Description:
Source: RMDB library OK2TRN, as collected in RNAgym. This 177-nucleotide RNA was probed chemically with 2A3 and DMS. The 2A3 profile rests on 4,968 reads. The reactions ran in a buffer of 150 mM KOAc, 10 mM MgCl2 and 150 mM bicine (pH 8.5), at 24 C. The DMS profile rests on 8,173 reads.
RNA sequence: GGGAACGACUCGAGUAGAGUCGAAAACGAUUGGUACUUUUCCUUUCGGGAGAGAUACAUUAUGCAGUCUCGAUAUGUUCGUGCACAUAUGUCUUACGUUAAGACUAGUGGUGAGCCUGGCACAUUAUACUGAGAAGCAAUUCGUUGCUUCUCAGUAAAAAGAAACAACAACAACAAC
Reactivity to 2A3 in 0.01 (KOAc 150mM, MgCl2 10mM, bicine 150mM(pH8.5), 24C), signal-to-noise 5, nucleotides 027 to 126: c030g070a080u040u140g090g000u070a090c050u070u000u050u040c000c000u050u140u210c140g020g020g000a040g010a010g020a050u060a050c050a070u120u250a090u290g040c030a020g060u010c000u030c050g050a050u030a050u180g110u050u090c080g040u110g040c060a010c010a050u100a060u150g030u020c010u030u090a090c140g290u130u170a050a000g000a010c000u020a020g080u000g050g080u040g020a020g000c000c030u040g030g020c020a030c000a070u120u140a080
Reactivity to DMS in 0.01 (KOAc 150mM, MgCl2 10mM, bicine 150mM(pH8.5), 24C), signal-to-noise 6, nucleotides 027 to 126: c070g010a100u000u000g000g000u010a050c080u010u010u000u000c000c010u000u010u010c190g020g010g010a070g010a030g010a070u000a050c030a090u000u020a100u000g010c060a080g010u000c010u000c040g010a090u000a050u000g010u000u000c090g020u000g010c040a110c030a050u000a080u010g010u000c010u000u000a110c300g010u010u010a020a030g000a040c010u000a120g010u000g000g010u000g000a080g020c030c030u000g010g010c030a040c080a080u010u000a140
For 2A3 the reverse transcriptase was SuperScript II with manganese.